RNA sequence: GGGAACGACUCGAGUAGAGUCGAAAAGGGGCUAGCCGGUGGGUGUUCCUCCCCCCGAGAGGGGAAGAGUGAGGCUUAUCCCGGGGAACCCGGCGAAUGCCCCCACAUAGCAGAGUCCGGGACCCCCAUACCUGGUGGUUCGCCACCAGGAAAAGAAACAACAACAACAAC
Reactivity to DMS in 0.01 (KOAc 150mM, MgCl2 10mM, bicine 150mM(pH8.5), 24C), signal-to-noise 5, nucleotides 027 to 129: g000g000g000g000c000u010a150g010c030c000g020g010u020g000g020g030u020g020u000u000c010c010u000c010c000c000c000c000c050g000a110g010a180g040g010g000g030a020a040g040a090g020u060g020a050g010g010c150u000u000a030u030c020c010c050g000g000g000g000a070a060c150c000c010g030g030c020g030a100a040u090g020c000c000c000c000c000a020c090a120u000a060g060c130a080g030a100g000u030c050c030g000g000g000a150c000c010c010c010c010a060u030a070
Reactivity to 2A3 in 0.01 (KOAc 150mM, MgCl2 10mM, bicine 150mM(pH8.5), 24C), signal-to-noise 6, nucleotides 027 to 129: g010g000g000g010c030u030a010g000c010c000g010g010u100g010g030g030u060g050u070u050c000c010u000c000c000c000c000c000c030g100a070g060a060g090g000g010g010a040a050g090a020g080u300g040a020g010g010c020u060u100a090u080c000c000c000g000g000g020g030a020a010c000c000c000g000g010c000g020a090a060u240g010c000c000c000c000c000a070c010a060u080a000g060c050a040g010a020g070u010c000c000g010g000g020a020c000c000c000c000c000a020u100a120

Notes
Structure probing data (DMS and 2A3) for a 170-nucleotide construct. For DMS the reverse transcriptase was MarathonRT.